[RMDB]
RNA sequence: GGGAACGACUCGAGUAGAGUCGAAAAGUACUAACGAAGUUAGAGGUUCUUAUGUGAUUGGACAACUGUUCUCCCUACUAGACUUUUAGCAUAGCUGGUUAAAAGUACUAUUACAGAUUGUUCAAUUAUUGCACUUAUUAUUCGUAAUAAGUGCAAUAAAAGAAACAACAACAACAAC
Reactivity to DMS in 0.01 (KOAc 150mM, MgCl2 10mM, bicine 150mM(pH8.5), 24C), signal-to-noise 8, nucleotides 027 to 126: g010u000a100c030u000a040a050c080g020a130a170g010u000u000a020g000a300g010g000u000u000c020u010u000a100u000g010u020g000a050u000u000g000g000a010c010a010a020c010u000g000u010u010c150u020c010c020c010u010a080c130u000a020g000a060c000u000u000u000u000a020g000c010a060u020a160g020c250u030g010g000u000u000a000a010a010a010g010u000a070c010u000a010u010u000a040c020a010g000a150u000u000g000u000u000c000a010a040u000u000
Reactivity to 2A3 in 0.01 (KOAc 150mM, MgCl2 10mM, bicine 150mM(pH8.5), 24C), signal-to-noise 9, nucleotides 027 to 126: g040u050a050c020u030a060a050c050g300a170a040g040u070u070a040g040a060g080g090u060u050c040u060u130a140u170g190u070g050a050u010u050g000g010a010c000a020a010c020u010g010u100u060c060u070c050c010c000u030a040c020u000a010g020a030c000u020u010u010u000a020g000c000a090u060a170g100c100u140g170g000u010u010a010a020a000a000g000u030a300c010u010a010u060u050a020c010a040g240a300u000u000g000u000u000c000a010a010u010u010